[RMDB]
RNA sequence: GGGAACGACUCGAGUAGAGUCGAAAAUUAGGGGCCAUGAUCAAGUUGUCGCUACUGUUCUGAUAGAGUACCUUGGAACUGCCUUUUCUCGUGACCUUAGUGGUCAGUUUUAAUUGCGAGACCACUGCUGGUUCUGGGUUCCGAAUGGUCGCGAGCAACUAAGCCCACUUUUCGAAGUGGGCUUAGUAAAAGAAACAACAACAACAAC
Reactivity to 2A3 in 0.01 (KOAc 150mM, MgCl2 10mM, bicine 150mM(pH8.5), 24C), signal-to-noise 2, nucleotides 027 to 156: u110u060a080g000g010g000g070c000c000a000u150g040a080u160c090a160a140g040u050u010g070u110c030g040c020u030a020c020u080g040u010u050c030u080g010a140u100a180g060a010g050u110a030c060c030u090u140g050g010a040a000c040u100g070c040c040u080u090u120u050c010u020c010g030u020g010a030c010c020u040u130a050g010u020g080g010u010c000a000g000u010u010u000u300a200a130u300u150g000c000g010a100g000a030c000c010a010c020u040g070c120u040g050g000u030u050c040u020g050g010g090u060u060c000c040g060a100a040u060g000g000u000c000g000c000g000a000g030c000a000
Reactivity to DMS in 0.01 (KOAc 150mM, MgCl2 10mM, bicine 150mM(pH8.5), 24C), signal-to-noise 1, nucleotides 027 to 156: u010u000a100g050g020g000g000c040c030a030u150g000a090u000c060a070a220g030u000u000g030u000c030g010c040u000a110c080u000g000u000u000c010u000g000a150u000a120g010a180g000u000a060c030c010u000u020g020g020a070a040c050u010g000c050c030u000u000u000u000c020u010c030g020u000g020a030c020c000u000u000a120g020u010g020g040u010c000a080g020u000u000u000u000a100a260u010u010g010c000g010a150g000a030c030c020a030c050u000g020c120u000g000g010u000u000c060u000g010g020g030u010u000c030c000g000a100a050u010g020g010u000c010g000c040g010a110g010c110a070
This 207-nucleotide RNA was probed chemically with 2A3 and DMS. For DMS the reverse transcriptase was MarathonRT. The RNA was probed in 150 mM KOAc, 10 mM MgCl2 and 150 mM bicine (pH 8.5) at 24 C. Values are in units of 0.01, from 0 to 300, in steps of 10. Reactivities are given for positions 27 through 156.